[RMDB]
RNA sequence: GGGAACGACUCGAGUAGAGUCGAAAAGGCAUCAACAUGAGCCAUCAGUAAUGACAGGGCAGCUUUGCAGAGCGUAAGGUAGCACCUGAUACCUUGGACCAAAACCGUAUUUUUAUGUAUCUUUCACAUGUACAGCUCUUGUCUUUGACUCAUCAAACCCUAGAAGAUUGUUCGCAAUCUUCUAGGGAAAAGAAACAACAACAACAAC
Reactivity to 2A3 in 0.01 (KOAc 150mM, MgCl2 10mM, bicine 150mM(pH8.5), 24C), signal-to-noise 7, nucleotides 027 to 156: g050g020c040a130u070c060a090a150c060a150u190g040a010g030c040c010a040u080c060a020g110u150a160a050u130g020a020c020a030g010g010g050c080a030g020c050u060u090u090g000c030a040g030a040g120c050g050u040a020a010g040g020u030a010g050c050a070c060c030u030g020a010u030a060c000c020u050u100g030g020a100c060c050a050a070a040a070c030c030g020u040a130u010u130u030u030u060a110u140g040u020a060u040c010u020u140u060c040a040c020a060u040g020u080a020c010a030g000c000u000c000u080u060g030u030c000u020u090u060g050a050c030u010c040a070u040c040a190a040a130
Reactivity to DMS in 0.01 (KOAc 150mM, MgCl2 10mM, bicine 150mM(pH8.5), 24C), signal-to-noise 1, nucleotides 027 to 156: g020g000c070a090u000c020a120a100c080a040u000g010a110g000c000c000a060u010c000a300g010u010a080a120u010g040a040c000a110g040g000g070c040a100g000c040u000u020u010g040c050a090g020a110g030c030g020u000a050a030g020g010u000a080g010c050a110c030c070u010g020a100u000a010c020c030u000u030g020g010a120c020c090a060a040a060a080c010c010g010u000a040u000u000u000u020u000a020u030g040u000a020u000c000u010u000u000c030a050c080a050u020g000u010a030c060a070g030c010u000c070u000u020g020u000c020u010u000u000g030a060c020u000c030a030u020c040a060a110a130